[RMDB]
RNA sequence: GGGAACGACUCGAGUAGAGUCGAAAAUGAAGCAAAUCUAUAAUUGCCAAUGAUGAGCAAUUCGCUAUUGCCGCCUAAAAACGGUUAGCCGGGGCUGCUAGAGCCUUGUUACCAAAGAUAGCCGGCGUUACGGCAUGAUGGUUCGCCAUCAUGCCAAUGAUGAGUUACUGUUCGCAGUAACUCAUCAAAAAGAAACAACAACAACAAC
Reactivity to DMS in 0.01 (KOAc 150mM, MgCl2 10mM, bicine 150mM(pH8.5), 24C), signal-to-noise 2, nucleotides 027 to 156: u000g000a210a150g030c020a040a090a130u000c100u000a080u000a060a070u000u000g000c000c010a130a170u000g020a220u040g000a150g010c010a030a010u000u000c000g020c020u010a080u000u010g030c030c030g000c020c020u000a090a080a100a060a100c020g050g000u000u000a060g050c030c050g000g000g040g020c000u000g000c090u000a120g020a090g040c010c000u000u000g020u000u000a210c070c060a060a090a110g000a080u000a080g040c020c130g020g010c060g010u010u000a030c110g050g000c020a010u000g010a030u010g010g000u000u000c300g060c050c000a000u000c000a000u000g000c000c000a000a010
Reactivity to 2A3 in 0.01 (KOAc 150mM, MgCl2 10mM, bicine 150mM(pH8.5), 24C), signal-to-noise 3, nucleotides 027 to 156: u170g020a050a010g040c030a040a020a100u080c080u050a130u080a280a070u040u010g000c000c010a080a140u240g060a150u080g010a140g030c000a000a030u070u040c030g030c070u070a050u060u230g010c020c030g020c010c010u060a070a050a020a010a010c050g010g020u040u040a020g010c030c020g030g000g000g010c030u030g030c060u100a040g020a010g200c000c010u000u020g030u030u080a060c020c030a040a010a010g030a020u020a020g030c030c000g020g000c020g060u120u090a060c080g000g000c000a000u010g000a000u000g030g000u040u040c110g030c070c000a000u000c000a010u000g000c000c000a000a000

This 207-nucleotide RNA was probed chemically with DMS and 2A3. The data come from the RNA Mapping Database (RMDB), library M2RFPK. The 2A3 profile rests on 1,852 reads. DMS adducts were read by reverse transcription with MarathonRT. For 2A3 the reverse transcriptase was SuperScript II with manganese.